[RMDB]
This 177-nucleotide RNA was probed chemically with 2A3 and DMS. 2A3 adducts were read by reverse transcription with SuperScript II with manganese. Reactivities are given for positions 27 through 126. Source: RMDB library OK2TST, as collected in RNAgym. The RNA was probed in 150 mM KOAc, 10 mM MgCl2 and 150 mM bicine (pH 8.5) at 24 C.

RNA sequence: GGGAACGACUCGAGUAGAGUCGAAAAGACAGGAGACCUUUGGGUUGGAUGCCAUCCCAAUGGCAUGAAAAUCUUCUUCUAUGACUCAGAGAAUCCUCCUGCAUCAGAGGUAAGUUUUAAAAAUGAACGUAAAGUACUGGUUCGCCAGUACUUUACGAAAAGAAACAACAACAACAAC
Reactivity to 2A3 in 0.01 (KOAc 150mM, MgCl2 10mM, bicine 150mM(pH8.5), 24C), signal-to-noise 2, nucleotides 027 to 126: g030a020c010a010g000g020a000g020a020c010c000u030u040u000g030g030g010u050u030g050g060a030u040g000c020c000a030u050c050c020c000a000a020u020g010g020c020a020u040g030a010a090a050a100u050c080u220u010c010u090u000c020u090a140u230g000a020c000u010c020a000g000a000g010a080a030u040c010c010u000c000c010u010g000c000a040u080c030a010g090a040g020g120u030a100a070g000u070u050u050u250a150a170a060a060a060u160g050a130a050
Reactivity to DMS in 0.01 (KOAc 150mM, MgCl2 10mM, bicine 150mM(pH8.5), 24C), signal-to-noise 3, nucleotides 027 to 126: g000a160c030a000g000g010a040g020a150c170c010u010u000u000g010g010g000u000u000g010g020a090u000g000c000c000a010u000c120c090c080a180a120u000g000g000c010a060u000g000a080a050a110a130u010c140u020u000c090u000u010c070u020a110u010g010a010c010u000c020a030g000a030g000a080a100u020c110c010u000c010c000u010g010c060a090u010c060a100g000a080g000g010u000a050a070g010u010u030u000u000a030a090a060a130a030u000g010a090a150